Source information: Source: RMDB library OK3TST, as collected in RNAgym. Structure probing data (2A3 and DMS) for a 207-nucleotide construct. For DMS the reverse transcriptase was MarathonRT. The RNA was probed in 150 mM KOAc, 10 mM MgCl2 and 150 mM bicine (pH 8.5) at 24 C. For 2A3, 3,367 sequencing reads were counted. High 2A3 reactivity points to a flexible backbone, as in loops and unpaired stretches.

[RMDB]
RNA sequence: GGGAACGACUCGAGUAGAGUCGAAAACGAUCUGUUCGCAGAUCGAGCUACGGAGACGUAGCAAAGAGCGUGAGGAGCCGCACACGCUCCAAACAAGAAAUAAGGCCCUAUCCAGCCAGCCGAGGAUAGGGGCGGCUCCGAAGAAACCGGCUGGCAACUACACACUAUACUUCGGUAUAGUGUGUAGAAAAGAAACAACAACAACAAC
Reactivity to 2A3 in 0.01 (KOAc 150mM, MgCl2 10mM, bicine 150mM(pH8.5), 24C), signal-to-noise 3, nucleotides 027 to 156: c010g000a000u000c000u010g050u080u080c240g000c080a000g000a000u000c000g000a020g000c000u000a010c000g000g020a100g020a070c020g000u010a000g000c010a000a070a000g010a000g000c010g000u000g000a040g000g010a000g020c010c000g040c010a090c000a000c070g010c000u000c050c000a050a110a060c060a050a060g160a120a100a020u160a080a090g120g020c000c000c000u000a000u020c000c010a010g050c000c000a000g000c000c000g060a160g010g010a000u000a000g000g000g000g000c000g000g000c010u000c000c010g080a100a080g060a080a070a030c060c000g000g000c000u000g000g000c000a020a000
Reactivity to DMS in 0.01 (KOAc 150mM, MgCl2 10mM, bicine 150mM(pH8.5), 24C), signal-to-noise 1, nucleotides 027 to 156: c020g000a010u010c000u000g030u010u000c260g060c030a070g000a010u010c000g000a080g010c000u000a020c010g060g020a300g000a300c000g020u010a040g000c030a040a170a080g000a070g000c020g020u000g010a090g020g000a050g080c050c030g000c070a130c000a070c020g000c000u000c010c020a030a160a120c050a120a070g000a140a130a190u010a060a150g000g010c020c020c030u000a060u010c010c030a140g000c040c000a070g010c010c040g000a090g000g010a070u000a050g000g040g010g000c020g010g000c010u000c010c070g000a120a130g000a040a090a070c070c010g020g040c000u020g000g000c020a050a050